About this RNA
The record gives the reactivity of an RNA of 177 nucleotides to DMS and 2A3. For DMS, 2,202 sequencing reads were counted. The reactions ran in a buffer of 150 mM KOAc, 10 mM MgCl2 and 150 mM bicine (pH 8.5), at 24 C.

RNA sequence: GGGAACGACUCGAGUAGAGUCGAAAAGAUAUGGAUCCAGGUGGCCAGCAACAGCGUACUUCGGAAACGAAGUACGACAUGCUGACACCGGAUCCUAAGUCAAAAGCGUUCGCUUCGGCGAACGCAAGUCAUUUCUAAACUUCGGUUUAGAAAUGACAAAAGAAACAACAACAACAAC
Reactivity to DMS in 0.01 (KOAc 150mM, MgCl2 10mM, bicine 150mM(pH8.5), 24C), signal-to-noise 2, nucleotides 027 to 126: g000a040u000a300u000g000g020a000u010c010c000a100g060g010u000g020g030c200c000a010g010c020a010a090c280a190g000c010g010u020a000c000u020u000c000g000g020a180a110a210c000g000a030a010g020u010a020c000g000a050c090a100u000g010c000u000g000a040c010a000c000c000g000g000a000u010c000c000u000a010a120g000u010c050a140a140a120a170g030c000g030u000u000c000g040c000u000u010c210g020g010c000g000a020a000c000g030c020a000a010
Reactivity to 2A3 in 0.01 (KOAc 150mM, MgCl2 10mM, bicine 150mM(pH8.5), 24C), signal-to-noise 2, nucleotides 027 to 126: g020a020u090a060u210g020g000a000u010c070c160a300g060g020u030g020g070c230c010a000g030c000a030a190c050a230g130c000g000u000a010c000u000u010c000g000g000a000a070a050c010g000a020a000g000u000a000c000g000a010c000a000u100g000c010u010g000a010c010a000c000c000g000g000a020u000c000c010u020a070a010g060u020c020a000a020a120a160g010c010g020u000u030c000g020c040u080u170c300g150g000c000g000a000a000c000g000c000a000a010